[RMDB]
The record gives the reactivity of an RNA of 177 nucleotides to 2A3 and DMS. The RNA was probed in 150 mM KOAc, 10 mM MgCl2 and 150 mM bicine (pH 8.5) at 24 C. Reactivities are given for positions 27 through 126.
RNA sequence: GGGAACGACUCGAGUAGAGUCGAAAAGUCGAAUCCGCCAGCCCGGCAAGCUCUGCCGCAUCCUUGCCGGCUUUGGCGUCCGAUGACACCCAGACACCGGUGAGCUCGAACUCCGGGUCGGCGAUGAAAGUAGUAUCGAAUUCGUUCGAUACUACUUAAAAGAAACAACAACAACAAC
Reactivity to 2A3 in 0.01 (KOAc 150mM, MgCl2 10mM, bicine 150mM(pH8.5), 24C), signal-to-noise 5, nucleotides 027 to 126: g010u010c000g010a050a050u060c060c020g000c000c000a010g030c030c010c000g000g000c010a000a000g000c030u030c020u110g140c140c120g200c100a020u090c010c010u000u010g000c000c000g020g000c000u070u050u040g000g000c010g010u000c000c010g010a020u070g020a000c010a070c060c000c010a030g020a020c110a110c050c010g030g020u040g020a070g100c070u090c180g120a170a110c030u000c020c010g010g000g000u010c020g020g090c070g050a070u130g130a050
Reactivity to DMS in 0.01 (KOAc 150mM, MgCl2 10mM, bicine 150mM(pH8.5), 24C), signal-to-noise 9, nucleotides 027 to 126: g010u000c010g010a090a060u000c230c030g020c010c010a030g000c300c010c010g000g000c010a020a020g000c050u000c030u000g010c130c130g010c060a060u010c190c010u000u000g000c010c000g010g010c060u000u010u000g010g010c010g000u000c060c030g000a050u000g010a140c140a160c020c010c010a150g000a050c050a100c020c010g000g010u010g000a110g010c060u000c160g010a120a160c040u000c010c010g010g000g000u000c010g000g010c120g000a110u010g000a100